This 177-nucleotide RNA was probed chemically with DMS and 2A3. The data come from the RNA Mapping Database (RMDB), library OK2TRN. Reactivities are given for positions 27 through 126. For 2A3, 1,154 sequencing reads were counted. The RNA was probed in 150 mM KOAc, 10 mM MgCl2 and 150 mM bicine (pH 8.5) at 24 C.
RNA sequence: GGGAACGACUCGAGUAGAGUCGAAAACGAUGAGGGGAGAAGAGAAGUGGCCAGGUGGGUCGAAGACGCCCGCCCCAGGGCGAACGCCCGUCGCAUGUUUGCAUGCGGGGGUCAGACCCCCUUACCGGCAUAGCACUAGUUUCGACUAGUGCUAUGCAAAAGAAACAACAACAACAAC
Reactivity to DMS in 0.01 (KOAc 150mM, MgCl2 10mM, bicine 150mM(pH8.5), 24C), signal-to-noise 2, nucleotides 027 to 126: c060g000a090u020g000a050g020g000g010g010a130g020a170a070g000a110g000a110a090g020u010g020g010c030c070a110g010g020u000g020g010g030u010c040g000a080a130g010a180c260g010c000c010c010g020c030c030c040c030a150g010g030g010c010g030a060a070c190g010c010c000c010g000u010c010g030c010a000u000g000u030u010u000g050c020a030u000g000c000g010g000g000g000g010u000c030a130g010a140c070c020c010c000c000u000u010a020c050c060g030
Reactivity to 2A3 in 0.01 (KOAc 150mM, MgCl2 10mM, bicine 150mM(pH8.5), 24C), signal-to-noise 1, nucleotides 027 to 126: c000g050a070u110g040a070g010g020g030g000a120g020a170a040g080a030g020a130a060g070u100g060g000c000c070a040g060g000u100g040g010g000u030c060g020a080a020g140a040c030g020c020c010c020g050c000c000c000c040a040g030g000g000c030g000a070a020c130g010c040c010c000g150u110c000g000c010a000u010g010u230u300u300g140c010a020u020g000c000g000g000g010g030g030u030c040a010g000a010c000c000c010c030c000u030u020a010c000c000g000